Conditions: 150 mM KOAc, 10 mM MgCl2 and 150 mM bicine (pH 8.5), 24 C. Structure probing data (DMS and 2A3) for a 177-nucleotide construct. DMS adducts were read by reverse transcription with MarathonRT. The data come from the RNA Mapping Database (RMDB), libraries RFM100 and RFMREP. In probing experiments dimethyl sulfate is read out at A N1 and C N3, which are open when not base-paired.

[RMDB]
RNA sequence: GGGAACGACUCGAGUAGAGUCGAAAAAACGUUCCAGCGCGUCACUUAAUCCGGAGCGCACGCCGCGAGGCAAAUCGCAUUGCGUGAUAUCACCGUUGACGAUAACCGUCACGUUCUCCCCGAGGCGGACAAGUUCGUGUUUCGACACGAACUUGUCAAAAGAAACAACAACAACAAC
Reactivity to DMS in 0.01 (KOAc 150mM, MgCl2 10mM, bicine 150mM(pH8.5), 24C), signal-to-noise 2, nucleotides 027 to 126: a070a130c120g020u000u000c000c000a080g000c070g050c060g080u000c000a040c130u000u010a090a150u010c140c070g010g050a050g000c040g000c060a090c060g030c040c300g030c010g030a060g020g020c190a030a170a020u000c010g000c000a120u000u000g020c060g020u000g030a070u000a040u000c070a120c120c040g000u020u000g000a030c000g000a300u080a120a140c210c000g000u030c000a070c040g020u000u000c010u000c010c000c000c040g000a100g010g040c090g030
Reactivity to 2A3 in 0.01 (KOAc 150mM, MgCl2 10mM, bicine 150mM(pH8.5), 24C), signal-to-noise 2, nucleotides 027 to 126: a000a020c010g000u000u020c000c000a030g030c050g000c000g070u050c010a020c050u100u100a040a010u050c010c020g000g020a030g010c010g010c020a040c030g000c000c000g000c000g000a030g110g020c040a110a100a020u000c000g000c020a030u010u180g000c020g030u080g020a110u050a000u180c040a050c080c010g020u050u090g000a000c000g020a080u050a090a040c080c010g010u000c010a020c000g010u070u000c040u010c030c020c040c000g050a030g000g030c030g030